[RMDB]
RNA sequence: GGGAACGACUCGAGUAGAGUCGAAAAUGGCGCUCCUCUCUAGCCGCUAUCUAGAUACACAGUAGUUCCGGGAGGAGUUUGUUUUUUCUCCUCCUGGACCGAUUGGUCCUGAGGAGCAACAUCGCCAGGCAUACGAAACGUUCGCGUUUCGUAUGCCAAAAGAAACAACAACAACAAC
Reactivity to 2A3 in 0.01 (KOAc 150mM, MgCl2 10mM, bicine 150mM(pH8.5), 24C), signal-to-noise 1, nucleotides 027 to 126: u070g010g010c000g010c000u010c000c000u010c000u040c000u010a050g020c000c020g070c260u100a180u200c010u000a010g010a050u050a080c180a000c040a140g130u190a000g000u030u000c000c000g000g010g010a000g040g010a000g000u030u000u130g000u050u120u000u000u030u000c000u000c000c000u000c000c020u000g000g000a000c000c000g090a050u080u010g000g020u030c000c090u060g030a070g000g000a000g000c010a040a000c010a040u020c010g020c040c000a050